[RMDB]
RNA sequence: GGGAACGACUCGAGUAGAGUCGAAAAGCAAAGGGGUUCGCCCCUUUGCAAAUAAACCGAUCAAAUAUAAGAUUAUAACGCGAAGAUCGGAAAAGAGCAAAAAAAGGUUCUACUUCGGUAGAACCAACGUUCUUUCAUAGUUCGCUAUGAAAGAACGAAAAGAAACAACAACAACAAC
Reactivity to DMS in 0.01 (KOAc 150mM, MgCl2 10mM, bicine 150mM(pH8.5), 24C), signal-to-noise 1, nucleotides 027 to 126: g010c010a010a000a040g000g010g000g010u000u010c300g010c000c010c000c000u000u020u000g010c020a000a110a030u010a020a070a140c000c000g000a020u000c000a020a080a060u000a120u000a050a170g010a200u000u000a020u010a090a130c110g010c050g020a060a120g020a010u000c000g020g010a070a010a060a060g000a230g010c200a000a000a070a040a090a130a070g010g010u010u000c000u000a000c000u000u000c110g020g040u000a020g000a010a000c000c000a000a010
Reactivity to 2A3 in 0.01 (KOAc 150mM, MgCl2 10mM, bicine 150mM(pH8.5), 24C), signal-to-noise 1, nucleotides 027 to 126: g020c010a020a000a000g000g050g020g000u040u150c130g120c020c000c020c000u020u020u000g020c000a010a000a000u000a000a000a020c000c010g030a020u010c030a030a300a000u260a050u050a110a050g010a010u160u140a110u180a270a070c050g010c040g160a090a050g000a040u010c020g000g000a000a050a030a030g070a010g010c100a000a040a000a070a040a110a040g000g010u000u000c000u000a010c020u010u040c130g100g000u000a000g000a000a010c000c010a000a000